RNA sequence: GGGAACGACUCGAGUAGAGUCGAAAAAUGGCAAUACGGUUUAUAUUUAUCGCUGGCCAAAUUUAUUCGGCAAGUGGUGUAAGCCGAAUUAUAACUCAGUGAUAGCAACAUUUUGUUACAAAAUUGCCGUACAAGAUCCCUUCGGGGAUCUUGUACGAAAAGAAACAACAACAACAAC
Reactivity to 2A3 in 0.01 (KOAc 150mM, MgCl2 10mM, bicine 150mM(pH8.5), 24C), signal-to-noise 2, nucleotides 027 to 126: a000u170g000g000c030a080a020u060a060c110g090g040u040u130u020a130u040a080u010u300u020a050u030c020g010c000u030g080g000c030c010a020a220a000u120u120u060a070u030u000c010g010g000c030a160a090g070u140g220g020u110g160u150a080a020g000c000c000g000a000a000u090u000a010u020a060a030c000u000c120a010g000u000g020a040u090a000g120c070a020a140c010a060u070u120u070u300g030u110u070a000c010a000a050a020a040u010u000g020c020
Reactivity to DMS in 0.01 (KOAc 150mM, MgCl2 10mM, bicine 150mM(pH8.5), 24C), signal-to-noise 1, nucleotides 027 to 126: a150u000g060g000c010a010a080u000a060c210g000g000u000u000u000a010u000a110u120u030u000a000u010c000g000c000u010g000g000c160c010a090a020a120u020u000u000a000u000u000c060g000g030c000a190a000g000u000g010g010u010g020u000a060a080g000c000c000g000a000a030u000u000a060u040a110a040c150u000c010a000g020u000g000a010u000a090g050c170a060a040c130a070u000u000u000u010g010u030u000a030c060a090a010a090a080u000u000g000c060